[RMDB]
Notes
Chemical mapping of a 207-nucleotide RNA with 2A3. Conditions: 150 mM KOAc, 10 mM MgCl2 and 150 mM bicine (pH 8.5), 24 C. It was measured as part of the RMDB library ARCHII.
RNA sequence: GGGAACGACUCGAGUAGAGUCGAAAAUCGGAUGUUUCGACAUCCGAAUAUACGGGUUGGUGGUCUAGCCAGGUUAUGACGGCUCCUUCACACGGAGCAGGCCGGCGGUUCGAAUCCGCCCCAACCCACCAUCCAUAUAUCCCCUUCGGGGGAUAAACUUACGGGUAGUAUUCGUACUACCCGUAAGAAAAGAAACAACAACAACAAC
Reactivity to 2A3 in 0.01 (KOAc 150mM, MgCl2 10mM, bicine 150mM(pH8.5), 24C), signal-to-noise 2, nucleotides 027 to 156: u010c000g000g000a000u010g030u000u120u150c190g060a010c000a010u030c000c000g000a000a000u090a000u000a010c130g020g010g000u000u000g000g000u000g010g030u000c010u000a030g020c010c050a050g090g110u230u180a000u060g000a000c000g030g000c010u020c000c000u080u130c130a090c000a010c130g000g000a000g000c000a010g010g010c040c000g000g020c000g010g000u000u000c000g010a000a010u000c000c000g000c000c020c000c000a000a010c020c000c000a000c000c000a010u000c000c000a050u090a000u050a010u200c000c000c000c000u010u040c170g010g000g000g000g000a010u020a020a010a040